[RMDB]
Chemical mapping of a 177-nucleotide RNA with 2A3 and DMS. The data come from the RNA Mapping Database (RMDB), library OK2TST. The 2A3 profile rests on 2,963 reads. For DMS, 5,082 sequencing reads were counted.
RNA sequence: GGGAACGACUCGAGUAGAGUCGAAAAUUGCGACCAAAGAAAUCUCGCAGAGGUGCAACAACCGCUUGUUCCAGCGUUUUGGGCACAGGAAUGGUGUCGGUUGGUUCUGGUGCAAGCAACGUCGCGAGUUUUAGUAAUCCUUCGGGAUUACUAAAACAAAAGAAACAACAACAACAAC
Reactivity to 2A3 in 0.01 (KOAc 150mM, MgCl2 10mM, bicine 150mM(pH8.5), 24C), signal-to-noise 3, nucleotides 027 to 126: u090u080g020c010g020a030c000c030a060a100a090g070a040a160a020u050c020u030c050g090c100a060g010a030g070g020u030g010c030a130a080c010a040a040c040c020g000c010u010u030g010u010u000c000c000a000g000c020g030u030u000u140u160g040g020g000c010a010c020a040g070g280a180a180u240g080g000u020g030u040c050g080g120u110u080g010g030u060u010c000u010g030g000u010g000c010a010a000g000c020a000a030c060g030u020c000g000c010g030a030
Reactivity to DMS in 0.01 (KOAc 150mM, MgCl2 10mM, bicine 150mM(pH8.5), 24C), signal-to-noise 5, nucleotides 027 to 126: u020u000g020c030g010a080c020c110a080a120a140g000a120a090a080u010c030u000c030g000c090a130g020a100g020g020u000g010c080a100a090c100a100a060c160c070g000c010u000u000g010u000u010c010c000a040g010c090g020u000u000u010u010g010g010g010c000a020c030a060g010g020a090a100u010g010g020u000g020u010c010g020g030u000u000g010g010u000u010c020u010g000g010u000g010c020a020a030g020c050a140a080c170g010u000c030g010c020g000a110